[RMDB]
RNA sequence: GGGAACGACUCGAGUAGAGUCGAAAAGAUAUGGAUCCUUGUGGCUUUUGACGCUCUAUGGUCGGAAACGACCAAAUGAGCGAUAAGCCAUUGGGAUCCUAAGUCAAAACCCUAGUUCGCUAGGGAACUAAGACUGCAUGUUCGCAUGCAGUCUUAGAAAAGAAACAACAACAACAAC
Reactivity to DMS in 0.01 (KOAc 150mM, MgCl2 10mM, bicine 150mM(pH8.5), 24C), signal-to-noise 3, nucleotides 027 to 126: g020a060u000a300u010g000g010a020u000c000c000u000u000g030u000g000g000c000u000u000u000u010g020a250c040g000c000u000c000u000a300u000g000g000u000c000g010g000a120a120a250c000g010a000c010c000a010a060a050u020g000a020g000c010g010a040u000a010a000g060c000c000a000u000u000g010g010g000a000u010c000c000u000a010a050g010u000c030a160a090a150a070c010c000c000u010a000g040u000u030c300g020c020u010a010g000g000g030a020a160
Reactivity to 2A3 in 0.01 (KOAc 150mM, MgCl2 10mM, bicine 150mM(pH8.5), 24C), signal-to-noise 2, nucleotides 027 to 126: g040a010u070a040u180g010g010a000u000c010c020u030u020g010u000g020g030c020u100u110u140u300g220a140c030g040c010u000c010u000a050u060g040g000u000c000g040g000a080a080a060c010g000a010c010c010a000a050a030u110g000a000g000c000g000a000u000a000a000g000c000c010a010u000u010g000g000g000a000u000c000c000u010a010a010g010u000c010a040a110a070a280c000c000c000u020a020g020u030u100c300g010c210u010a010g020g010g020a030a030